[RMDB]
RNA sequence: GGGAACGACUCGAGUAGAGUCGAAAACCUCCAGAGAAACCCUCUCCAACGAACAAAGAAGACCGCUGGGGCGCCAGGAAGAGUCCGUAGCGAUAGGAGGGGAUGCUAGGAGUCGGCGGCGACCGAACCAGUAGUUAUUGUUCGCAAUAACUACUGGAAAAGAAACAACAACAACAAC
Reactivity to 2A3 in 0.01 (KOAc 150mM, MgCl2 10mM, bicine 150mM(pH8.5), 24C), signal-to-noise 1, nucleotides 027 to 126: c020c010u030c020c010a050g000a020g030a260a140a080c010c000c000u000c000u000c010c000a060a060c040g110a070a020c070a180a200a050g100a130a060g040a130c050c040g030c000u010g000g050g000g000c020g040c020c030a060g050g110a090a040g050a040g090u000c030c020g100u070a010g010c020g010a040u070a090g040g000a000g010g000g030g000a000u020g000c020u040a050g010g030a030g040u030c010g020g000c030g030g060c050g030a110c010c000g000a020a040
Reactivity to DMS in 0.01 (KOAc 150mM, MgCl2 10mM, bicine 150mM(pH8.5), 24C), signal-to-noise 1, nucleotides 027 to 126: c020c000u000c030c030a050g000a130g030a080a180a090c090c010c000u010c000u000c030c040a180a230c080g000a080a070c150a060a160a210g010a140a140g000a120c110c030g020c030u000g000g000g000g080c060g000c080c130a060g010g010a100a150g030a100g000u000c010c000g010u000a030g010c030g020a130u000a080g000g000a010g010g000g000g050a000u000g000c030u000a050g000g020a020g050u000c020g000g030c030g010g030c090g000a070c030c000g000a080a250

The record gives the reactivity of an RNA of 177 nucleotides to 2A3 and DMS. DMS (dimethyl sulfate) methylates the pairing face of unpaired adenines and cytosines. Reactivities are rounded to 0.1 and cut off at 0 and 3. For 2A3, 1,696 sequencing reads were counted. For DMS the reverse transcriptase was MarathonRT. It was measured as part of the RMDB library 15KREP.